[RMDB]
RNA sequence: GGGAACGACUCGAGUAGAGUCGAAAAUAACAACUCACCUGCCGAAUGAACUAGCCCUGAAAAUGGAUGGCGCUAAAGCGGGCUACUUAUACUUUGCCGUUAGCGCGAUAGCAUUUAUAAUGUACGCAAGUUCCUAUUGCUUCGGCAAUAGGAACUUAAAAGAAACAACAACAACAAC
Reactivity to 2A3 in 0.01 (KOAc 150mM, MgCl2 10mM, bicine 150mM(pH8.5), 24C), signal-to-noise 2, nucleotides 027 to 126: u080a040a000c040a010a020c000u000c010a000c010c000u000g000c000c000g080a100a290u170g080a050a010c000u000a010g000c050c000c000u040g060a190a000a000a060u070g030g030a060u090g110g000c000g000c010u060a080a000a150g180c000g000g020g050c000u040a070c040u030u080a030u060a200c070u050u270u140g060c020c000g020u050u010a000g000c000g020c030g000a000u030a010g070c040a020u000u000u000a090u120a100a070u070g040u040a020c070g000c080
Reactivity to DMS in 0.01 (KOAc 150mM, MgCl2 10mM, bicine 150mM(pH8.5), 24C), signal-to-noise 2, nucleotides 027 to 126: u000a070a100c110a140a140c040u000c000a110c010c000u030g010c030c000g000a100a080u000g010a050a080c040u000a070g020c000c010c060u000g000a030a000a030a050u000g020g020a050u000g000g000c000g010c000u000a000a080a070g010c090g020g000g000c040u030a040c160u000u030a120u060a090c160u000u060u010g000c030c020g050u000u000a010g000c000g000c000g000a030u010a040g040c000a030u010u010u000a070u000a130a010u020g010u020a030c210g010c060

Source: RMDB library RFM100, as collected in RNAgym. Structure probing data (2A3 and DMS) for a 177-nucleotide construct. The reactions ran in a buffer of 150 mM KOAc, 10 mM MgCl2 and 150 mM bicine (pH 8.5), at 24 C. Values cover nucleotides 27 to 126. For 2A3 the reverse transcriptase was SuperScript II with manganese.